Structure probing data (2A3 and DMS) for a 177-nucleotide construct. The reactions ran in a buffer of 150 mM KOAc, 10 mM MgCl2 and 150 mM bicine (pH 8.5), at 24 C. The DMS profile rests on 1,954 reads. For 2A3 the reverse transcriptase was SuperScript II with manganese. It was measured as part of the RMDB library OK2TST.
RNA sequence: GGGAACGACUCGAGUAGAGUCGAAAAAGGCUAGACUUGAACUCCUGGGCUCAAGUAAUCCACCUCAGCCUGAGUAGCUGAGACUACAGCCCAUCUUAUUUCUUUAAAUCAUUCAUCUCAGGCAGAGCAUCACGCUUACAUUCGUGUAAGCGUGAUGAAAAGAAACAACAACAACAAC
Reactivity to 2A3 in 0.01 (KOAc 150mM, MgCl2 10mM, bicine 150mM(pH8.5), 24C), signal-to-noise 3, nucleotides 027 to 126: a010g050g000c060u070a020g030a080c010u000u020g020a020a020c020u050c060c070u110g030g030g020c010u030c040a040a010g010u010a030a060u000c020c030a040c020c040u000c000a000g000c010c000u050g070a050g040u090a010g000c030u020g000a010g000a090c030u080a060c030a010g020c000c000c000a040u020c030u110u140a200u070u160u010c070u050u180u090a070a110a090u130c040a070u160u080c020a090u020c020u000c010a000g010g020c050a030g020a020g090
Reactivity to DMS in 0.01 (KOAc 150mM, MgCl2 10mM, bicine 150mM(pH8.5), 24C), signal-to-noise 3, nucleotides 027 to 126: a100g000g000c050u000a070g010a040c010u000u000g000a050a070c040u010c030c070u010g010g000g040c280u000c050a040a040g010u000a070a090u010c070c070a140c170c010u000c020a040g030c000c000u010g000a100g020u000a080g000c080u000g010a100g000a070c080u000a120c140a110g000c030c010c030a120u010c040u000u000a090u000u020u000c060u010u000u000a050a090a080u000c090a050u000u010c070a060u000c000u000c020a030g000g000c120a110g010a070g010